Record summary
Conditions: 150 mM KOAc, 10 mM MgCl2 and 150 mM bicine (pH 8.5), 24 C. Structure probing data (2A3) for a 177-nucleotide construct. Reactivities are rounded to 0.1 and cut off at 0 and 3. 2A3 adducts were read by reverse transcription with SuperScript II with manganese. For 2A3, 1,801 sequencing reads were counted.

RNA sequence: GGGAACGACUCGAGUAGAGUCGAAAAACGCAGGUACGCCUGCGAAGGGCGCGAGGGAUUGGAGAGAAAGGCAGUUCCUGAUGGUCCCCUCCUCAGGGGCUGGCUUUCCUCUGGUCCUUCCCUCCAAGAGAUGGGACGAUUUCGAUCGUCCCAUCUCAAAAGAAACAACAACAACAAC
Reactivity to 2A3 in 0.01 (KOAc 150mM, MgCl2 10mM, bicine 150mM(pH8.5), 24C), signal-to-noise 2, nucleotides 027 to 126: a000c000g010c010a000g000g020u070a040c220g070c050c000u000g020c010g010a010a010g030g010g000c080g030c100g030a020g000g020g000a000u020u040g060g000a010g020a040g010a010a000a000g040g060c010a000g010u000u020c000c000u010g000a050u240g010g060u170c030c020c000c010u120c000c000u010c000a000g000g000g010g000c000u020g000g070c000u000u000u000c000c000u000c000u000g000g000u000c020c000u000u010c000c000c010u000c010c000a110a010